[RMDB]
RNA sequence: GGGAACGACUCGAGUAGAGUCGAAAAGUUGUAAACUUCGGUUUACAACAAAUAAGAGAGAAAAGCUCUCCAUCGCUCUUCGAAGCGACAACGGAACCAAAAAAACCCAGCUCUUCGGAGCUGGGAACUCUACUUCUUCGUUCGCGAAGAAGUAGAGAAAAGAAACAACAACAACAAC
Reactivity to 2A3 in 0.01 (KOAc 150mM, MgCl2 10mM, bicine 150mM(pH8.5), 24C), signal-to-noise 1, nucleotides 027 to 126: g010u000u000g020u010a020a000a010c010u050u110c200g000g000u000u000u000a000c000a000a000c020a000a010a010u050a080a030g080a000g010a000g040a060a140a140a240g080c000u010c000u000c020c000a080u000c020g030c020u020c040u180u300c090g160a290a010g000c010g020a000c020a000a060c030g030g080a010a030c020c010a040a020a000a000a030a100a050c020c010c000a000g000c000u000c000u010u120c280g170g020a000g000c020u020g000g000g000a010a000
Description:
Conditions: 150 mM KOAc, 10 mM MgCl2 and 150 mM bicine (pH 8.5), 24 C. Chemical mapping of a 177-nucleotide RNA with 2A3. For 2A3 the reverse transcriptase was SuperScript II with manganese. Reactivities are given for positions 27 through 126. It was measured as part of the RMDB library M2PK50.